About this RNA: This 177-nucleotide RNA was probed chemically with 2A3. For 2A3 the reverse transcriptase was SuperScript II with manganese. The reactions ran in a buffer of 150 mM KOAc, 10 mM MgCl2 and 150 mM bicine (pH 8.5), at 24 C. The data come from the RNA Mapping Database (RMDB), library RFM100. Values are in units of 0.01, from 0 to 300, in steps of 10.
[RMDB]
RNA sequence: GGGAACGACUCGAGUAGAGUCGAAAAGUGUAGGCCGGGAGUUGAGACUGGUGUGUGUUUAGUGGAUUAUCUGAUCAGCACAUGUGUGACAGUGUUGAUCACAAGUCAUUGCCAGCUCUGUUCAUUUGUCGUUGAAUAACUUCGGUUAUUCAACGACAAAAGAAACAACAACAACAAC
Reactivity to 2A3 in 0.01 (KOAc 150mM, MgCl2 10mM, bicine 150mM(pH8.5), 24C), signal-to-noise 1, nucleotides 027 to 126: g100u070g010u020a050g050g000c100c010g080g000g000a000g040u090u030g020a010g070a080c030u010g060g070u060g000u020g000u000g090u040u230u020a110g000u000g060g030a040u000u030a060u300c050u030g000a000u000c000a000g000c000a050c120a160u020g000u000g180u100g100a040c000a000g000u010g010u000u000g000a000u010c000a000c040a000a030g020u020c000a040u060u130g060c020c030a000g040c000u030c030u080g040u050u010c150a180u060u000u050